Source information: Chemical mapping of a 177-nucleotide RNA with DMS and 2A3. DMS (dimethyl sulfate) methylates the pairing face of unpaired adenines and cytosines. The DMS profile rests on 1,087 reads.
[RMDB]
RNA sequence: GGGAACGACUCGAGUAGAGUCGAAAAGAUAUGGAAAGAAGCUCGAUAAGCUCGUGGUCGGAAACGACCACAGAGCUUUUGACGAGCCACUUCCUAAGUCAAAGCAGCGUAGUUCGCUACGCUGCAACCCUUUCUUGAUCUUCGGAUCAAGAAAGGGAAAAGAAACAACAACAACAAC
Reactivity to DMS in 0.01 (KOAc 150mM, MgCl2 10mM, bicine 150mM(pH8.5), 24C), signal-to-noise 2, nucleotides 027 to 126: g010a050u000a300u000g000g030a000a010a080g010a230a300g000c000u000c000g010a150u000a000a010g010c000u010c010g010u000g000g020u010c000g000g000a070a080a190c000g010a020c010c010a000c010a040g010a000g000c000u000u000u010u010g000a170c060g030a020g000c010c010a220c140u010u000c000c000u010a000a110g000u000c050a040a100a120g000c000a020g010c000g000u010a010g000u020u010c220g020c010u000a010c000g010c000u000g000c020a010a000
Reactivity to 2A3 in 0.01 (KOAc 150mM, MgCl2 10mM, bicine 150mM(pH8.5), 24C), signal-to-noise 1, nucleotides 027 to 126: g020a020u060a020u120g000g020a010a020a070g060a120a000g020c000u000c000g100a130u040a170a070g000c000u020c040g030u000g000g000u000c000g000g000a140a040a010c000g010a010c000c080a010c080a010g030a000g000c020u030u000u020u000g040a020c000g000a000g020c000c000a020c030u020u020c000c030u030a120a020g030u040c040a090a110a070g010c020a000g020c020g000u010a000g000u070u120c210g040c160u000a000c000g000c000u000g000c000a000a000